[RMDB]
Chemical mapping of a 177-nucleotide RNA with 2A3 and DMS. DMS adducts were read by reverse transcription with MarathonRT. Values cover nucleotides 27 to 126. It was measured as part of the RMDB library OK2TRN.
RNA sequence: GGGAACGACUCGAGUAGAGUCGAAAAAUUCGCCAGGUUCAGCGUCUCGGCGACCACACCCUGACCGGCGAACGCGGCAUCGCCAUGCAACAUCAGCGGCACCACCGAGAACGCCCGUUGGCCGUCGGGCGUACAAGAUCUUCGGAUCUUGUACGCCAAAAGAAACAACAACAACAAC
Reactivity to 2A3 in 0.01 (KOAc 150mM, MgCl2 10mM, bicine 150mM(pH8.5), 24C), signal-to-noise 2, nucleotides 027 to 126: a010u030u000c000g050c030c000a010g060g040u130u210c110a070g040c020g100u030c020u050c070g040g020c000g030a030c020c020a030c010a030c010c000c030u040g050a050c010c150g000g000c050g040a020a000c030g020c070g040g000c020a050u070c060g000c060c000a100u160g000c040a110a100c000a240u150c030a030g000c020g000g000c020a010c020c030a060c030c070g060a060g020a170a030c080g040c000c010c010g000u020u050g150g000c000c010g010u030c040g000
Reactivity to DMS in 0.01 (KOAc 150mM, MgCl2 10mM, bicine 150mM(pH8.5), 24C), signal-to-noise 2, nucleotides 027 to 126: a180u000u000c050g000c010c000a080g010g000u000u010c130a050g010c150g010u000c030u020c140g070g020c000g010a040c210c070a110c190a070c010c040c010u010g010a030c040c050g020g010c030g020a030a060c050g000c120g000g000c050a060u000c070g000c010c080a040u000g020c100a050a070c180a130u010c060a060g030c090g000g060c030a090c020c060a100c090c000g000a070g020a090a120c120g020c030c000c020g010u020u000g010g020c030c000g000u000c070g000